[RMDB]
RNA sequence: GGGAACGACUCGAGUAGAGUCGAAAAGUCUUGAAGAGCUUCAAGCAAAUAUUUCUGAACUUGAAAGAAUCAGAACUUCUGGUUCAAAGUCAGAGAGGGAAGAGUUCUUAUCUUUAAUAAAAAAAGGCAAAGACUACUAGUUCGCUAGUAGUCUUUGAAAAGAAACAACAACAACAAC
Reactivity to DMS in 0.01 (KOAc 150mM, MgCl2 10mM, bicine 150mM(pH8.5), 24C), signal-to-noise 2, nucleotides 027 to 126: g000u010c010u010u020g010a020a060g020a240g020c160u000u000c020a000a020g000c050a150a110a110u000a060u020u000u000c020u010g000a070a050c010u000u000g040a130a120a160g000a040a020u000c010a010g000a110a230c300u010u000c000u000g000g000u000u000c000a070a040a030g000u010c020a010g010a010g010a030g000g000g020a040a060g000a140g020u000u000c010u000u000a060u010c010u010u000u000a040a180u020a010a020a090a100a050a040a170g000g000
Reactivity to 2A3 in 0.01 (KOAc 150mM, MgCl2 10mM, bicine 150mM(pH8.5), 24C), signal-to-noise 1, nucleotides 027 to 126: g020u000c030u090u100g030a110a100g060a160g250c030u050u000c070a050a000g020c060a030a060a060u130a030u010u180u000c030u020g080a160a090c020u060u020g080a190a200a090g020a000a020u000c000a000g070a190a300c080u290u130c020u050g040g000u000u030c050a060a000a010g000u050c000a020g000a020g000a030g010g030g020a030a030g030a000g010u020u030c000u020u080a130u100c020u000u100u040a300a120u300a100a120a300a020a020a110a020g000g030